[RMDB]
RNA sequence: GGGAACGACUCGAGUAGAGUCGAAAACUCGUCUUUCUUUCGUUUCACUUUUCCCUCCGUUUGGAUGGUUGAUGUUACAGCUUCUAAGCACGUGGCAAUGGACGGUACGGAUUGAUCGGCGCUGUAAGGUGUACGACAUAUUCGUAUGUCGUACACCAAAAGAAACAACAACAACAAC
Reactivity to 2A3 in 0.01 (KOAc 150mM, MgCl2 10mM, bicine 150mM(pH8.5), 24C), signal-to-noise 3, nucleotides 027 to 126: c010u010c000g030u010c050u010u070u010c000u010u020u030c020g040u020u050u070c070a070c040u130u040u030u010c020c020c000u010c020c030g050u060u070u110g050g020a070u090g010g000u030u040g030a120u080g050u090u140a030c020a020g010c000u040u030c020u060a090a020g010c020a020c110g020u050g040g000c030a060a100u100g050g020a010c020g020g010u020a020c050g020g030a040u000u070g020a060u050c020g020g000c030g030c030u040g040u100a120a080
Reactivity to DMS in 0.01 (KOAc 150mM, MgCl2 10mM, bicine 150mM(pH8.5), 24C), signal-to-noise 3, nucleotides 027 to 126: c040u010c020g010u010c050u000u000u000c010u000u000u000c060g000u010u000u000c040a100c070u000u000u010u020c040c010c050u010c050c040g040u000u010u010g000g000a060u020g040g010u000u000g020a110u000g020u000u000a110c120a080g020c030u000u010c060u000a100a100g030c030a060c120g010u000g000g020c080a070a080u000g000g000a070c060g010g000u000a040c070g000g000a060u000u000g000a070u010c020g030g000c040g000c050u000g000u010a050a110
Structure probing data (2A3 and DMS) for a 177-nucleotide construct.
For 2A3 the reverse transcriptase was SuperScript II with manganese.